[RMDB]
RNA sequence: GGGAACGACUCGAGUAGAGUCGAAAAGCAUCGACGACGGUCCUGCCAUGAGACCGUAACGAGGACAUGUCGCCUCUAAUGGCGUCGGGGAGCCGGCAGCUUACCCCAAGGAUGAGCGCCUAAUGCCUAUACCCGAUUCGCUUCGGCGAAUCGGGAACCAAGUUGUGAGUUUCGACUCACAACUUGGAAAAGAAACAACAACAACAAC
Reactivity to 2A3 in 0.01 (KOAc 150mM, MgCl2 10mM, bicine 150mM(pH8.5), 24C), signal-to-noise 2, nucleotides 027 to 156: g000c010a040u140c020g080a090c000g000a000c010g040g000u000c010c040u040g200c010c050a280u210g030a100g020a170c000c000g000u000a040a040c020g000a010g000g060a020c050a120u170g000u100c050g000c010c000u060c080u060a080a140u140g010g000c000g010u050c040g010g000g000g000a020g050c040c050g120g000c060a010g010c010u040u160a230c010c000c000c030a060a140g040g030a100u070g010a010g010c040g050c010c030u060a100a060u130g020c000c000u120a110u130a180c000c000c000g000a000u030u000c000g000c010u070u030c130g110g010c000g000a000a000u000c000g000g000g000a000a010